Chemical mapping of a 177-nucleotide RNA with 2A3 and DMS. For 2A3 the reverse transcriptase was SuperScript II with manganese. For DMS, 1,488 sequencing reads were counted. The RNA was probed in 150 mM KOAc, 10 mM MgCl2 and 150 mM bicine (pH 8.5) at 24 C. For 2A3, 1,309 sequencing reads were counted.
RNA sequence: GGGAACGACUCGAGUAGAGUCGAAAAUGCGGGUGUCCUCGGCCUCAUAAACCUCGCCCAUCCCGCCUCGGCCCAGCAGCCGCAAUAGCUGAUACGGCCCAAAUUGCGACCCUACCUGCGGAACGGCGGAAGGGGAUGUAUUCGUACAUCCCCUUCCAAAAGAAACAACAACAACAAC
Reactivity to 2A3 in 0.01 (KOAc 150mM, MgCl2 10mM, bicine 150mM(pH8.5), 24C), signal-to-noise 1, nucleotides 027 to 126: u110g020c050g010g010g000u040g020u090c000c040u030c040g060g000c050c000u040c030a060u120a080a140a030c030c030u000c010g040c000c020c000a020u050c030c030c020g040c010c020u030c020g050g000c030c000c010a010g050c010a010g010c000c000g050c020a060a140u110a130g000c000u030g000a140u110a240c040g000g000c020c010c000a060a180a050u110u070g030c050g010a100c000c000c010u040a040c030c000u000g020c010g020g040a060a060c070g080g020c070
Reactivity to DMS in 0.01 (KOAc 150mM, MgCl2 10mM, bicine 150mM(pH8.5), 24C), signal-to-noise 2, nucleotides 027 to 126: u000g000c060g000g020g010u010g000u000c020c040u010c090g020g000c020c030u020c060a050u000a090a070a110c060c010u000c080g000c040c040c060a140u000c030c020c050g030c030c050u000c080g010g020c030c010c080a060g010c040a090g000c030c020g020c060a050a030u010a100g030c020u000g000a100u010a060c210g010g030c000c020c040a050a070a070u000u010g010c050g030a070c020c040c010u010a030c050c030u040g020c070g000g010a060a070c130g020g000c150

DMS (dimethyl sulfate) methylates the pairing face of unpaired adenines and cytosines.